[RMDB]
RNA sequence: GGGAACGACUCGAGUAGAGUCGAAAAGAUCGUUCAUCUCUCCAAUUAAUCCGACUUUGACAACCGGGAUGGACCUCUUACAGGUGGGAGAGACGGAAGUAAGGAUAAUCCUGAAGGAACGCGCCAACAGCAGCCACAUUUUCGAAUGUGGCUGCUGAAAAGAAACAACAACAACAAC
Reactivity to DMS in 0.01 (KOAc 150mM, MgCl2 10mM, bicine 150mM(pH8.5), 24C), signal-to-noise 2, nucleotides 027 to 126: g000a140u040c050g000u000u010c000a300u000c000u000c000u020c000c040a130a100u000u060a050a020u010c010c000g010a000c080u000u000u000g000a130c300a100a180c080c010g000g000g040a080u020g020g030a050c000c030u010c030u000u060a170c170a040g010g020u020g000g000g050a070g000a000g000a050c000g060g000a060a060g000u010a050a060g000g110a250u030a050a050u060c000c010u000g040a140a030g010g000a000a000c000g000c020g010c000c020a120a180
Reactivity to 2A3 in 0.01 (KOAc 150mM, MgCl2 10mM, bicine 150mM(pH8.5), 24C), signal-to-noise 2, nucleotides 027 to 126: g020a060u060c000g020u060u000c000a010u070c010u010c000u000c000c000a020a300u130u020a060a040u040c040c070g010a080c160u140u140u300g140a070c040a050a020c070c060g010g010g020a010u060g070g070a010c000c000u020c080u030u150a110c130a190g030g030u100g080g000g000a000g000a000g010a030c030g010g090a010a000g000u010a040a000g000g000a040u130a180a060u100c000c000u000g010a000a000g010g000a000a010c000g000c040g010c010c000a060a060